[RMDB]
RNA sequence: GGGAACGACUCGAGUAGAGUCGAAAAAUGCAUUCCGUUCGCACUCGUAGUAGUAUUCAUUCAAUUGGCCCAUUCAACGAAUUCUGGUAAUUAGCGUGCGGAAUAAAAUUGAAUACGACUGUGAAUACCACCACGCGCAUUUCGAUGCGCGUGGUGGAAAAGAAACAACAACAACAAC
Reactivity to 2A3 in 0.01 (KOAc 150mM, MgCl2 10mM, bicine 150mM(pH8.5), 24C), signal-to-noise 1, nucleotides 027 to 126: a000u280g000c060a060u100u000c000c000g120u000u030c000g000c050a000c050u040c070g050u000a020g000u000a000g000u000a000u020u020c000a000u000u000c120a020a090u070u130g130g030c020c020c020a000u070u000c000a030a120c260g180a040a130u120u030c000u090g140g000u280a230a020u030u180a000g020c020g160u000g030c200g010g010a000a000u030a000a010a000a000u070u000g000a000a000u090a000c030g000a000c200u070g070u000g070a220a030u140a020